[RMDB]
Source information
Chemical mapping of a 177-nucleotide RNA with DMS and 2A3. It was measured as part of the RMDB library OK1LIB. For DMS the reverse transcriptase was MarathonRT. The RNA was probed in 150 mM KOAc, 10 mM MgCl2 and 150 mM bicine (pH 8.5) at 24 C.
RNA sequence: GGGAACGACUCGAGUAGAGUCGAAAAUGGUGUUAAGUGGAAUAAGUGGUCACAUAUACAUAUAUGUACAGGGGGCUACAUAUAUGUAUAUGCCCCCUCGCGUCAGUAUAAGUAGGUAUAAGGUGGACAUCCCAUUUAUCUUCGGAUAAAUGGGAUGAAAAGAAACAACAACAACAAC
Reactivity to DMS in 0.01 (KOAc 150mM, MgCl2 10mM, bicine 150mM(pH8.5), 24C), signal-to-noise 4, nucleotides 027 to 126: u030g000g050u000g020u010u010a020a170g000u000g010g010a050a070u020a090a070g010u010g000g010u030c110a180c030a020u010a010u000a010c000a020u000a020u000a000u000g000u000a010c100a090g020g020g020g000g020c140u000a020c020a010u000a010u000a020u010g010u010a020u010a020u020g000c040c010c000c020c030u000c060g000c070g000u010c070a060g000u010a010u020a020a140g000u010a020g010g000u010a050u020a050a060g010g020u000g000g020a200
Reactivity to 2A3 in 0.01 (KOAc 150mM, MgCl2 10mM, bicine 150mM(pH8.5), 24C), signal-to-noise 4, nucleotides 027 to 126: u120g040g010u110g040u140u130a130a050g060u070g050g070a090a060u100a200a060g070u070g070g010u100c050a000c000a030u010a000u000a010c000a000u030a000u000a010u020g010u010a020c110a100g000g000g010g110g000c050u020a000c010a000u020a000u000a010u030g010u000a020u000a000u010g000c000c000c010c020c010u000c020g030c000g010u010c030a030g040u080a080u030a170a050g070u090a040g010g070u070a070u010a130a050g050g020u050g010g010a000